The record gives the reactivity of an RNA of 177 nucleotides to DMS and 2A3.
[RMDB]
RNA sequence: GGGAACGACUCGAGUAGAGUCGAAAACGAGCCUCGUUCGCGAGGCUCGAAAGGCGGCGAAAGCUCGACUAAAUGUCGAAAGUGUAACGCCAAUCCCACACUAAAGGCUGCCGUUCGCGGCAGCCAAGAUAAAGACACUCUUCGGAGUGUCUUUAUCAAAAGAAACAACAACAACAAC
Reactivity to DMS in 0.01 (KOAc 150mM, MgCl2 10mM, bicine 150mM(pH8.5), 24C), signal-to-noise 2, nucleotides 027 to 126: c010g020a020g040c000c010u000c000g020u000u000c140g030c040g010a010g040g020c000u000c000g000a010a050a140g010g050c130g000g000c050g000a040a100a230g010c050u000c010g000a040c030u000a080a150a180u000g010u000c000g010a030a120a050g040u010g010u010a100a130c000g000c000c000a040a220u000c000c000c010a130c210a070c120u020a010a050a210g000g020c010u000g020c000c000g000u010u010c250g000c110g010g020c000a000g010c000c000a000a030
Reactivity to 2A3 in 0.01 (KOAc 150mM, MgCl2 10mM, bicine 150mM(pH8.5), 24C), signal-to-noise 2, nucleotides 027 to 126: c000g020a000g030c010c000u020c000g020u050u010c050g020c030g110a000g000g000c000u000c000g000a000a000a000g010g000c060g010g040c060g080a110a000a010g010c020u010c010g010a000c010u150a300a040a120u190g000u000c010g050a080a090a040g110u100g040u100a100a000c000g000c000c010a000a030u020c010c040c000a000c010a000c010u240a170a130a030g010g040c000u000g000c000c020g000u030u110c290g000c000g100g000c000a000g000c010c000a000a000
The DMS profile rests on 990 reads. It was measured as part of the RMDB library M2PK50. For DMS the reverse transcriptase was MarathonRT. For 2A3 the reverse transcriptase was SuperScript II with manganese.